Source: RMDB library OK2TST, as collected in RNAgym. Chemical mapping of a 177-nucleotide RNA with DMS and 2A3.
RNA sequence: GGGAACGACUCGAGUAGAGUCGAAAAGGGAUACCUGCACUUUGAGGCUUGGGAAGGAUUGAAUGCGCCCAGUUGGCAGGGAGGUCCUGCGACGGCCUUUGAGAUGGGAACGAGUGCGGUGAUGACGGCCAUUCUUUACAUUCGUGUAAAGAAUGGCAAAAGAAACAACAACAACAAC
Reactivity to DMS in 0.01 (KOAc 150mM, MgCl2 10mM, bicine 150mM(pH8.5), 24C), signal-to-noise 5, nucleotides 027 to 126: g010g000g000a130u000a100c160c020u010g030c040a070c060u010u000u000g010a090g000g000c050u010u000g000g000g010a140a070g010g000a090u000u010g010a140a170u010g010c100g010c030c020c060a120g010u000u010g020g020c030a040g000g000g010a160g010g000u000c010c010u000g000c060g020a150c080g000g000c010c010u000u010u000g010a120g010a150u000g000g010g000a100a110c130g000a050g020u010g010c030g000g010u010g000a080u000g000a100c140g010
Reactivity to 2A3 in 0.01 (KOAc 150mM, MgCl2 10mM, bicine 150mM(pH8.5), 24C), signal-to-noise 4, nucleotides 027 to 126: g050g000g010a020u060a080c030c010u050g030c020a020c050u110u090u160g080a050g020g040c050u130u100g110g010g040a070a070g040g030a060u060u130g120a140a060u130g060c060g040c040c010c030a060g040u120u140g160g000c020a000g000g040g010a050g020g060u060c010c000u020g000c000g030a030c030g030g000c000c000u050u080u120g170a160g010a070u140g030g030g000a050a050c040g000a020g040u040g010c030g010g010u060g020a080u120g050a020c070g080